[RMDB]
RNA sequence: GGGAACGACUCGAGUAGAGUCGAAAACGUAGAUACUUCGGUAUCUACGAAAAUAACGCUGGCGUGGGACAGAGCCGGAGCUAGCCUCGGAUAGUCUCAGUAAAACAGCAUGGUUCGCCAUGCUGAAGACAAACAUAUGCUUCGGCAUAUGUUUGUCAAAAGAAACAACAACAACAAC
Reactivity to DMS in 0.01 (KOAc 150mM, MgCl2 10mM, bicine 150mM(pH8.5), 24C), signal-to-noise 2, nucleotides 027 to 126: c010g020u000a000g020a010u000a000c000u000u010c180g030g010u000a010u000c010u000a000c000g000a030a050a070a060u010a090a140c090g020c110u010g020g000c030g010u000g010g080g000a020c060a090g010a150g000c030c010g000g020a030g010c030u000a110g000c050c020u010c060g030g000a060u000a090g000u000c000u000c030a110g000u010a100a050a110a150c000a000g010c000a000u000g000g010u000u030c280g010c010c000a000u000g010c000u000g000a050a080
Reactivity to 2A3 in 0.01 (KOAc 150mM, MgCl2 10mM, bicine 150mM(pH8.5), 24C), signal-to-noise 3, nucleotides 027 to 126: c010g000u000a010g000a020u000a010c000u010u060c250g070g000u000a000u000c000u000a010c000g000a000a010a000a010u060a030a030c050g000c130u060g030g030c030g080u090g020g000g020a020c020a070g180a070g070c010c020g040g000a020g020c060u080a030g020c000c010u010c010g050g020a050u030a090g030u000c000u000c020a040g070u160a020a120a030a050c000a000g000c000a000u020g000g050u040u040c210g020c060c000a000u000g000c000u010g010a020a010
Structure probing data (DMS and 2A3) for a 177-nucleotide construct. It was measured as part of the RMDB library M2PK50. The 2A3 profile rests on 4,535 reads.